Structure probing data (2A3 and DMS) for a 207-nucleotide construct. For DMS the reverse transcriptase was MarathonRT. 2A3 adducts were read by reverse transcription with SuperScript II with manganese. High DMS reactivity at an A or C suggests that its Watson-Crick edge is free. It was measured as part of the RMDB library OK3TST. Values cover nucleotides 27 to 156.
RNA sequence: GGGAACGACUCGAGUAGAGUCGAAAAUAAUGCAAACAUGUGCGAAAACAACGAAAAAGAGUGCCAAAUGGGAGAGUCUUGUAUGGGGGUCUACUCCAUACUCCAAAUUUGGAGGUGAGCCAAUGGACUUGGUGUCAUGCACUUGGAAUAAAUGUUACCCUAAUGAGUAGUUCGCUACUCAUUAGGGAAAAGAAACAACAACAACAAC
Reactivity to 2A3 in 0.01 (KOAc 150mM, MgCl2 10mM, bicine 150mM(pH8.5), 24C), signal-to-noise 3, nucleotides 027 to 156: u110a000a050u100g040c000a020a070a000c050a120u100g030u020g040c020g060a030a050a030a020c070a020a010c060g160a070a020a040a030a010g050a000g020u060g000c020c030a030a050a020u050g020g050g000a100g000a010g120u020c040u170u170g010u060a030u020g010g000g000g010g060u050c080u140a090c010u010c000c010a000u010a020c000u000c010c010a060a110a090u140u050u010g020g010a040g000g070u050g000a000g030c010c010a030a030u090g060g020a040c020u030u030g000g010u060g060u080c010a010u060g000c000a010c000u010u030g010g050a040a040u080a060a100a030u130g030u050u090a060
Reactivity to DMS in 0.01 (KOAc 150mM, MgCl2 10mM, bicine 150mM(pH8.5), 24C), signal-to-noise 2, nucleotides 027 to 156: u010a090a100u000g030c010a200a060a080c090a070u030g020u030g010c030g030a150a050a110a070c010a100a180c090g010a120a030a070a090a120g000a090g030u000g000c000c030a000a070a140u010g020g000g020a150g010a120g010u010c100u000u010g050u000a020u010g030g000g010g000g010u000c220u000a060c020u000c000c030a070u000a110c010u020c000c000a030a200a100u000u000u000g020g000a160g030g000u000g010a260g000c000c020a030a170u010g010g000a180c060u020u000g010g010u010g030u010c020a130u000g000c070a050c020u000u000g020g000a130a030u010a020a020a080u000g030u010u000a130